[RMDB]
RNA sequence: GGGAACGACUCGAGUAGAGUCGAAAACGGGCCGUAAGGAAGAAAAGCACCCAGAGGGAGGAAGCCACACAGGGGUUUGCAGAGAAAUCACCUCCAGAGGACCCCUUCAGCGAACAGAACGAUCGCUCACCCCUCCUGUUCGCAGGAGGGAAAAGAAACAACAACAACAAC
Reactivity to DMS in 0.01 (KOAc 150mM, MgCl2 10mM, bicine 150mM(pH8.5), 24C), signal-to-noise 8, nucleotides 027 to 129: c130g020g000g030c030c020g050u100a030a090g030g020a060a020g030a050a040a060a070g000c060a080c030c010c050a060g050a140g060g000g010a020g020g000a070a080g020c080c030a090c100a080c110a020g030g020g030g050u030u050u050g000c300a110g020a050g000a050a050a080u040c140a160c130c000u020c030c010a040g030a170g040g030a040c140c020c010c000u030u080c000a060g020c040g030a040a040c040a020g030a010a120c180g020a000u040c050g030c040u080c140a100c090
Reactivity to 2A3 in 0.01 (KOAc 150mM, MgCl2 10mM, bicine 150mM(pH8.5), 24C), signal-to-noise 7, nucleotides 027 to 129: c030g000g020g000c010c010g080u080a030a050g020g010a000a050g020a020a090a010a010g020c020a060c000c020c020a020g040a050g020g000g000a020g010g020a030a000g020c020c010a060c000a010c030a050g000g000g000g010u020u040u100g030c040a010g030a000g030a110a120a050u120c040a090c040c000u040c010c010a030g020a040g090g030a030c000c000c000c000u060u090c050a010g000c000g020a030a020c000a060g050a080a020c070g070a090u040c030g010c070u040c020a110c010